Chemical mapping of a 177-nucleotide RNA with DMS and 2A3. DMS adducts were read by reverse transcription with MarathonRT. For 2A3, 36,650 sequencing reads were counted. The RNA was probed in 150 mM KOAc, 10 mM MgCl2 and 150 mM bicine (pH 8.5) at 24 C. It was measured as part of the RMDB library OK1LIB.

RNA sequence: GGGAACGACUCGAGUAGAGUCGAAAACUUCGUGAAAAAGCGACGAUGGAUCAGGUCUAUCGAGAUCCAACCGAAACAUCGUUACUAGGAGAGGAAUAAAUCAAGAUAGGCAGGCUAUCAUAGAAAGAAGUAGUUUGUUAUUCGUAGCAAGCUGCUUAAAAGAAACAACAACAACAAC
Reactivity to DMS in 0.01 (KOAc 150mM, MgCl2 10mM, bicine 150mM(pH8.5), 24C), signal-to-noise 9, nucleotides 027 to 126: c040u000u000c020g000u010g000a060a070a060a100a100g010c030g010a010c110g010a020u000g010g010a160u020c010a090g000g010u000c020u010a080u010c100g000a270g000a020u010c030c070a130a170c060c040g000a090a110a130c040a070u010c080g010u020u010a070c080u010a120g000g000a080g010a190g010g010a090a060u030a040a090a050u020c050a050a160g000a020u000a010g010g010c050a040g010g000c020u000a010u000c030a090u040a090g000a080a090a090g010
Reactivity to 2A3 in 0.01 (KOAc 150mM, MgCl2 10mM, bicine 150mM(pH8.5), 24C), signal-to-noise 9, nucleotides 027 to 126: c010u040u030c020g050u060g080a170a030a020a020a000g060c020g030a030c030g010a020u030g010g030a110u080c050a100g040g060u010c020u050a120u100c070g040a040g010a060u010c020c020a020a030c020c010g020a040a030a030c020a050u090c030g050u070u070a050c060u050a040g060g040a050g030a020g060g060a090a070u130a120a090a020u110c040a040a020g010a030u010a010g010g030c030a010g050g000c010u010a010u030c020a060u070a070g150a040a130a010g090